[RMDB]
RNA sequence: GGGAACGACUCGAGUAGAGUCGAAAACGGGGUUGGCUAUAGUUGAUUUCGAACCGUAUGCUUAUGUAUAUGGAAUGAUUUGUACGCUUUACGCAUGUGUACACUCACUCUCAGUUCACUCUUGUGAGAGAAGGGAGAGAGAGAUAUUUUGCGAUUAGUAUAGUGGGAUCUUCGGAUUCUGCUAUGCAAAAGAAACAACAACAACAAC
Reactivity to 2A3 in 0.01 (KOAc 150mM, MgCl2 10mM, bicine 150mM(pH8.5), 24C), signal-to-noise 2, nucleotides 027 to 156: c040g010g010g010g000u050u050g000g000c020u050a020u060a130g040u030u020g050a180u020u050u050c030g040a030a020c000c000g010u010a010u020g000c020u240u120a100u300g020u010a010u000a010u020g020g000a090a070u080g040a070u050u030u090g010u000a020c010g000c000u030u050u090a030c030g000c020a010u040g000u000g010u010a000c010a000c010u010c000a030c000u010c010u000c010a100g010u040u020c010a030c020u030c030u110u230g060u180g100a020g000a000g000a010a050g070g010g000a000g000a000g010a000g000a000g000a000u030a070u080u170u090u090g010c020g020a030u010u070a030
Reactivity to DMS in 0.01 (KOAc 150mM, MgCl2 10mM, bicine 150mM(pH8.5), 24C), signal-to-noise 2, nucleotides 027 to 156: c070g020g020g030g020u000u000g000g020c050u010a150u010a080g000u010u000g010a090u000u000u000c010g020a070a270c020c010g040u000a010u000g020c010u000u000a120u010g050u000a030u010a040u000g010g000a070a100u000g010a080u000u010u000g030u000a030c060g030c040u000u010u000a130c060g000c050a060u000g020u020g020u000a030c020a160c100u000c010a160c010u000c000u010c020a090g000u000u000c010a130c020u000c040u000u010g020u010g000a090g000a100g010a080a100g000g010g020a050g000a060g010a040g010a030g020a080u000a040u000u000u000u010g020c020g010a200u000u010a140
Source information: Chemical mapping of a 207-nucleotide RNA with 2A3 and DMS. For DMS, 5,181 sequencing reads were counted. DMS adducts were read by reverse transcription with MarathonRT. For 2A3 the reverse transcriptase was SuperScript II with manganese. It was measured as part of the RMDB library OK3TST.